[RMDB]
RNA sequence: GGGAACGACUCGAGUAGAGUCGAAAAGAUAUGGAAUAAAGAGCGCCAGGCGAAUUCGGAAACGAAUAGCCUGGAACUACGCUCGAUAUUCCUAAGUCAAACUAGGUGUCGUUCGCGACACCUAGAAGGUAUCAUUAUACUUCGGUAUAAUGAUACCAAAAGAAACAACAACAACAAC
Reactivity to DMS in 0.01 (KOAc 150mM, MgCl2 10mM, bicine 150mM(pH8.5), 24C), signal-to-noise 6, nucleotides 027 to 126: g000a040u000a300u010g010g000a010a010u000a000a050a300g000a010g000c000g040c000c000a010g010g000c000g010a120a200u000u000c000g010g000a130a080a190c000g010a010a000u000a240g000c000c000u000g000g000a020a010c080u020a300c010g000c000u000c000g000a270u000a010u000u000c000c010u000a060a070g010u010c050a090a090a250c010u000a000g000g000u000g000u010c000g010u000u010c240g010c020g000a020c000a000c010c000u000a000g000a040a040
Reactivity to 2A3 in 0.01 (KOAc 150mM, MgCl2 10mM, bicine 150mM(pH8.5), 24C), signal-to-noise 3, nucleotides 027 to 126: g010a020u090a030u150g000g010a010a000u010a010a050a040g010a000g000c040g010c020c010a000g000g010c010g050a090a120u010u010c010g010g030a110a070a060c010g000a010a020u040a020g000c030c010u020g000g000a000a000c020u070a010c010g000c000u000c000g010a000u000a000u000u000c000c000u010a100a010g050u020c050a040a080a140c000u000a000g030g000u010g000u010c020g010u050u090c300g010c010g140a000c000a000c000c000u000a000g000a000a030